An RNA of 177 nucleotides, treated with DMS and 2A3 and read out base by base.
2A3 adducts were read by reverse transcription with SuperScript II with manganese.
The RNA was probed in 150 mM KOAc, 10 mM MgCl2 and 150 mM bicine (pH 8.5) at 24 C.
Values are in units of 0.01, from 0 to 300, in steps of 10.
[RMDB]
RNA sequence: GGGAACGACUCGAGUAGAGUCGAAAAUCCCCAUAGUUCGCUAUGGGGAAAAGCCGUACCGCGUAGCACGCGGAUAGGAGGGAAGAUAUCCACGGCACGCGAAAACCUUCGCCUUCGGGCGAAGGAACUACGUCUAUUCGUUCGCGAAUAGACGUAGAAAAGAAACAACAACAACAAC
Reactivity to DMS in 0.01 (KOAc 150mM, MgCl2 10mM, bicine 150mM(pH8.5), 24C), signal-to-noise 2, nucleotides 027 to 126: u000c000c000c010c000a000u000a010g010u000u020c260g020c000u000a010u000g030g000g000g010a000a010a050a110g000c000c020g000u020a060c170c010g010c010g000u000a060g030c010a240c000g030c010g000g000a020u000a030g000g000a160g000g010g010a120a070g010a130u000a010u000c000c020a030c000g000g000c000a030c010g000c000g000a080a040a080a140c010c000u000u020c020g010c000c010u000u000c190g010g000g010c010g010a010a020g000g010a030a060
Reactivity to 2A3 in 0.01 (KOAc 150mM, MgCl2 10mM, bicine 150mM(pH8.5), 24C), signal-to-noise 3, nucleotides 027 to 126: u000c000c000c010c000a000u000a010g010u030u020c180g010c110u010a000u010g000g000g000g020a030a060a000a060g030c000c020g030u090a090c130c020g020c010g010u030a070g040c090a090c250g000c040g020g000a010u020a010g090g040a080g050g040g080a070a080g030a140u040a020u030c010c000a000c020g010g000c010a000c020g040c010g060a050a020a050a100c010c000u000u000c000g010c010c010u050u090c200g100g010g000c000g000a000a000g000g000a000a000